[RMDB]
RNA sequence: GGGAACGACUCGAGUAGAGUCGAAAAGAUAUGGAUAUCAGGGGAGACGGUGUCGGAAACGACAUGACCGUCGACGAUCCGAUAUCCUAAGUCAAAACACCUCAACAGGUUCGCCUGUUGAGGUGAACGGAAUCAGAUUGUUCGCAAUCUGAUUCCGAAAAGAAACAACAACAACAAC
Reactivity to DMS in 0.01 (KOAc 150mM, MgCl2 10mM, bicine 150mM(pH8.5), 24C), signal-to-noise 2, nucleotides 027 to 126: g000a020u000a160u000g000g000a030u000a010u010c010a180g020g000g000g000a050g020a000c000g020g020u000g000u020c000g020g010a010a000a130c000g000a000c030a020u010g010a300c200c020g020u000c010g000a080c300g000a020u000c000c010g000a010u000a010u000c000c000u000a010a060g020u010c010a100a080a100a240c000a010c000c000u000c000a000a020c000a010g000g010u010u020c300g000c000c000u000g010u000u000g000a010g000g000u000g000a000a040
Reactivity to 2A3 in 0.01 (KOAc 150mM, MgCl2 10mM, bicine 150mM(pH8.5), 24C), signal-to-noise 2, nucleotides 027 to 126: g000a020u020a020u050g010g010a000u000a010u070c300a300g040g000g020g020a010g000a010c020g020g040u030g000u000c020g000g010a040a010a030c010g000a000c000a030u110g250a140c040c070g000u000c000g000a010c000g000a000u000c000c010g000a010u000a000u000c010c000u000a020a000g000u000c010a000a070a100a100c010a010c000c010u000c000a000a000c020a000g040g090u110u120c230g110c100c000u000g000u000u010g010a000g000g020u000g000a010a000